[RMDB]
RNA sequence: GGGAACGACUCGAGUAGAGUCGAAAAGCACUUCGUGAGAAGUGCAAGCAUUACUUCGGUAAUGCACUGCACACGUACGCGUGUGCAGACUGCGUCGGUGACGACGCAGACGGUCCGUUCGCGGACCGAGAUAGGUCUACGGACCUAUCAGGUUCCUCGUACGCGAGGAACCAAGGAGGACGCGUGAGCGUCCUCCAGGAACCACGUGAGUGGUUCCAGCCGGGCGCGGUGGCGCGUGCCUGUAGUCCCAGCUACUCGGGAGGCUUAGAUAAGCGUUCGCGCUUAUCAAAAGAAACAACAACAACAAC
Reactivity to 2A3 in 0.01 (KOAc 150mM, MgCl2 10mM, bicine 150mM(pH8.5), 24C), signal-to-noise 4, nucleotides 027 to 266: g010c000a010c000u020u020c050g100u100g070a200g000a020a000g000u000g000c000a000a010g000c000a000u000u010a000c000u030u070c220g070g000u000a000a000u000g000c010a010c000u000g000c000a010c000a000c010g030u070a040c300g010c010g120u010g010u010g000c000a010g020a000c000u000g000c000g000u000c000g000g080u050g030a030c000g000a000c000g010c000a000g010a000c010g000g000u000c020c000g030u040u060c250g040c020g100g000a000c000c000g000a010g000a010u000a000g010g000u000c000u010a030c300g110g000a000c010c000u000a000u000c000a000g000g000u010u020c000c000u000c000g010u040a020c300g010c010g150a000g000g000a000a000c000c000a000a050g010g000a000g000g000a010c020g070c060g070u200g100a070g020c000g010u010c010c050u010c010c000a000g010g000a000a000c010c010a000c000g060u120g110a110g010u010g010g000u000u000c000c000a000g000c000c000g010g000g000c010g010c010g000g000u010g000g000c010g000c000g000u020g000c000c000u020g030u060a030g010u000c010c010c000a020g000c040u300a200c050u170c150g010g000g010a000g000g000c020u030u060a030
Reactivity to DMS in 0.01 (KOAc 150mM, MgCl2 10mM, bicine 150mM(pH8.5), 24C), signal-to-noise 1, nucleotides 027 to 266: g000c000a000c000u000u020c000g010u040g000a270g000a010a010g000u000g030c000a030a090g010c000a000u000u000a010c000u000u000c190g010g000u000a010a000u010g000c000a300c010u000g000c000a020c020a010c010g020u040a060c250g020c000g020u000g010u000g000c000a010g000a160c000u020g010c000g020u020c000g010g000u010g000a100c010g040a020c010g010c010a000g030a230c050g010g020u010c030c000g010u010u000c260g020c020g000g000a040c000c000g000a060g010a000u010a000g030g010u000c000u000a130c240g010g000a020c010c000u010a000u000c000a110g000g010u000u010c000c000u000c020g010u000a110c170g020c010g000a000g000g000a010a000c000c010a050a010g020g000a050g040g060a030c040g060c070g010u000g010a300g070c140g020u000c000c140u000c000c000a020g000g010a010a010c000c000a000c000g000u050g000a260g010u010g000g000u010u000c000c010a070g000c020c010g000g020g000c030g020c010g000g000u000g000g000c000g000c000g010u000g010c000c070u000g000u000a090g020u010c010c050c000a000g000c030u020a060c030u000c090g000g000g020a010g000g000c020u000u000a050